This 177-nucleotide RNA was probed chemically with 2A3 and DMS. The DMS profile rests on 936 reads. Values cover nucleotides 27 to 126. The data come from the RNA Mapping Database (RMDB), library OK2TST.
RNA sequence: GGGAACGACUCGAGUAGAGUCGAAAAAGGUAAGCUCAUCCACCCUGACCUCACACCCCAUCCACACAGCCUUGGGUCAGUGUCAGAAUGUCGCUUGGUAGACCCAGCAAACACUGAGAUGGACAAAAACCACUACGCAUUUCGAUGCGUAGUGGUUAAAAGAAACAACAACAACAAC
Reactivity to 2A3 in 0.01 (KOAc 150mM, MgCl2 10mM, bicine 150mM(pH8.5), 24C), signal-to-noise 1, nucleotides 027 to 126: a010g120g030u150a060a040g020c010u030c100a040u020c010c030a030c030c050c000u000g010a050c010c000u040c000a030c000a010c020c040c020c000a050u040c020c010a070c040a020c000a080g000c000c030u130u090g000g000g010u000c050a010g010u030g060u040c010a010g080a280a100u140g100u160c060g020c100u040u020g050g000u020a040g040a070c000c100c000a030g030c010a000a090a000c060a050c030u010g010a010g030a150u060g030g040a010c070a020a080a000
Reactivity to DMS in 0.01 (KOAc 150mM, MgCl2 10mM, bicine 150mM(pH8.5), 24C), signal-to-noise 2, nucleotides 027 to 126: a090g020g000u000a050a130g000c070u010c020a080u000c040c020a060c080c040c040u000g010a080c050c060u000c030a050c110a100c050c070c000c030a090u030c070c050a040c110a100c110a020g000c060c020u020u000g030g000g020u010c050a040g020u000g030u000c080a090g010a120a130u020g020u000c130g010c060u010u000g070g030u000a140g000a070c110c000c000a070g000c090a090a010a060c100a030c050u000g010a120g000a100u000g000g000a060c220a020a010a100